[RMDB]
RNA sequence: GGGAACGACUCGAGUAGAGUCGAAAAGUUCGGGGACACGGCGUCUGCCUGGGUCCGAAAGAUUUCUUGUCGCAAAUCUACAAGACAUUGGUUAACGUGUGCUCCACUUUAAGGGCCGCUCGCCGGGUCAACGGAUGGUCUUCGGGCCGUUCGUUGAAAAAGAAACAACAACAACAAC
Reactivity to DMS in 0.01 (KOAc 150mM, MgCl2 10mM, bicine 150mM(pH8.5), 24C), signal-to-noise 9, nucleotides 027 to 126: g000u010u020c120g020g000g000g000a060c030a030c050g010g020c040g010u020c110u020g010c010c000u010g020g000g010u000c000c020g010a080a130a050g010a020u000u000u000c020u010u020g010u020c190g010c170a030a040a040u010c020u000a040c160a170a080g000a020c040a070u010u010g000g010u000u020a060a060c040g000u010g010u010g000c020u000c010c030a070c040u000u010u020a090a110g000g000g000c010c020g000c040u000c030g010c040c010g000g000g010
Reactivity to 2A3 in 0.01 (KOAc 150mM, MgCl2 10mM, bicine 150mM(pH8.5), 24C), signal-to-noise 9, nucleotides 027 to 126: g050u070u090c040g000g000g000g030a030c000a000c020g050g000c020g050u030c050u060g010c000c000u030g020g000g080u000c000c010g020a030a040a000g010a010u010u030u000c000u030u110g140u080c060g020c100a020a020a050u030c010u020a020c020a060a010g010a010c010a030u020u070g040g010u070u130a070a020c020g020u030g010u070g070c010u020c020c010a030c010u050u070u100a090a090g050g030g010c010c010g020c020u030c010g030c010c010g030g010g010
Record summary: The record gives the reactivity of an RNA of 177 nucleotides to DMS and 2A3. The DMS profile rests on 84,114 reads. The RNA was probed in 150 mM KOAc, 10 mM MgCl2 and 150 mM bicine (pH 8.5) at 24 C.